[RMDB]
RNA sequence: GGGAACGACUCGAGUAGAGUCGAAAAGCAACAUUCCGAGGGGACCGUCCUCCUCGGUAAUGGCGAAUGGGACCCCAGAUUUCCUUCCUAUUGAGAAGGAAAUAACUGGCACUCCCUUAGCCAUCCGACAGCUCGUCGUUCGCGACGAGCAAAAGAAACAACAACAACAAC
Reactivity to DMS in 0.01 (KOAc 150mM, MgCl2 10mM, bicine 150mM(pH8.5), 24C), signal-to-noise 1, nucleotides 027 to 129: g010c110a070a130c170a200u040u090c020c000g040a030g000g000g000g000a200c140c190g080u000c100c000u020c000c030u020c000g010g010u050a020a000u030g000g040c030g020a130a070u000g040g030g020a000c160c300c000c000a040g020a000u000u000u000c000c000u020u020c000c000u080a120u090u190g050a180g040a000a000g040g040a000a000a030u060a000a000c010u010g010g050c040a210c260u000c000c040c160u040u050a140g000c010c000a020u030c100c040g030a070c180a070
Reactivity to 2A3 in 0.01 (KOAc 150mM, MgCl2 10mM, bicine 150mM(pH8.5), 24C), signal-to-noise 4, nucleotides 027 to 129: g070c040a000a100c000a130u100u000c000c000g000a010g010g010g000g020a100c040c060g060u090c030c020u000c010c000u000c000g020g000u000a010a020u000g000g000c000g010a000a000u070g000g000g020a000c090c010c000c030a010g000a010u000u030u000c000c000u020u020c020c010u140a300u170u300g140a300g000a010a010g010g000a000a000a000u010a010a010c000u000g000g000c030a040c030u000c010c000c000u010u040a000g010c000c000a020u030c020c030g020a040c030a060